[RMDB]
RNA sequence: GGGAACGACUCGAGUAGAGUCGAAAAGAUAUGGAGCAGGUUGAACCCAACAGCUCGGAAACGAGACAUGGGUACAACACUGCUCCUAAGUCAAAGCACUAAUUUGGGUUCGCCCAAAUUAGUGCAACAUAAGAAUAUUCUUCGGAAUAUUCUUAUGAAAAGAAACAACAACAACAAC
Reactivity to 2A3 in 0.01 (KOAc 150mM, MgCl2 10mM, bicine 150mM(pH8.5), 24C), signal-to-noise 4, nucleotides 027 to 126: g040a020u050a040u160g010g000a010g000c000a010g000g030u010u010g020a050a020c000c010c010a050a070c100a090g020c000u010c010g010g020a100a080a020c010g000a010g030a020c040a140u100g010g000g000u030a020c000a000a010c040a050c020u000g000c000u000c000c000u000a010a000g000u020c040a040a080a050g000c000a000c000u010a010a010u010u010u010g030g000g040u050u090c290g160c010c000c000a000a000a000u000u000a000g010u000g000c000a000a010
Reactivity to DMS in 0.01 (KOAc 150mM, MgCl2 10mM, bicine 150mM(pH8.5), 24C), signal-to-noise 8, nucleotides 027 to 126: g000a040u000a300u010g000g000a010g020c000a000g010g010u000u000g000a080a010c000c000c000a020a100c260a170g000c000u000c000g010g000a070a100a200c010g000a010g000a040c080a160u000g000g010g010u000a060c010a000a000c010a100c000u000g010c000u000c000c000u000a010a050g000u000c040a090a100a130g010c000a010c000u000a000a010u000u000u000g010g000g010u000u010c270g010c000c000c000a000a010a010u000u000a000g020u000g010c010a010a030

Record summary
Chemical mapping of a 177-nucleotide RNA with 2A3 and DMS. The data come from the RNA Mapping Database (RMDB), library TTRDEL. Conditions: 150 mM KOAc, 10 mM MgCl2 and 150 mM bicine (pH 8.5), 24 C.